[RMDB]
RNA sequence: GGGAACGACUCGAGUAGAGUCGAAAACAUAUGGCUGGCGGUGACGGUACGCUGAUAUGUCUUGAAGGGUCUAGCCAAUCUUCGUCACUGAGUGUACUGAACAAUUCUGCCGUGGUGAUCCGAGGCAGCAGUAAAUGGGGUUCGCCCCAUUUACUGCAAAAGAAACAACAACAACAAC
Reactivity to 2A3 in 0.01 (KOAc 150mM, MgCl2 10mM, bicine 150mM(pH8.5), 24C), signal-to-noise 5, nucleotides 027 to 126: c020a030u130a060u200g110g000c050u050g010g050c040g000g030u040g040a040c020g040g020u060a010c010g000c020u030g030a050u050a040u210g100u030c090u100u160g050a060a050g120g000g000u030c050u090a030g020c000c020a040a080u050c000u060u020c020g060u030c020a040c100u060g020a000g060u070g020u060a030c040u060g030a140a020c030a080a190u150u040c020u040g020c000c040g010u060g020g050u080g030a060u030c020c000g010a030g040g020c030a040
Reactivity to DMS in 0.01 (KOAc 150mM, MgCl2 10mM, bicine 150mM(pH8.5), 24C), signal-to-noise 3, nucleotides 027 to 126: c070a070u000a070u020g020g000c000u000g000g000c070g000g000u010g020a140c060g000g000u000a040c110g020c020u010g000a080u040a100u010g010u010c030u030u020g000a040a050g000g000g030u000c090u000a120g000c050c070a150a110u050c010u000u010c010g000u010c070a050c090u000g000a030g020u000g040u010a020c060u010g010a090a130c160a090a120u060u030c010u000g000c000c020g010u000g000g010u000g010a060u020c030c030g000a190g010g000c110a130
An RNA of 177 nucleotides, treated with 2A3 and DMS and read out base by base. DMS adducts were read by reverse transcription with MarathonRT. The 2A3 profile rests on 4,084 reads. It was measured as part of the RMDB library OK1LIB. The RNA was probed in 150 mM KOAc, 10 mM MgCl2 and 150 mM bicine (pH 8.5) at 24 C.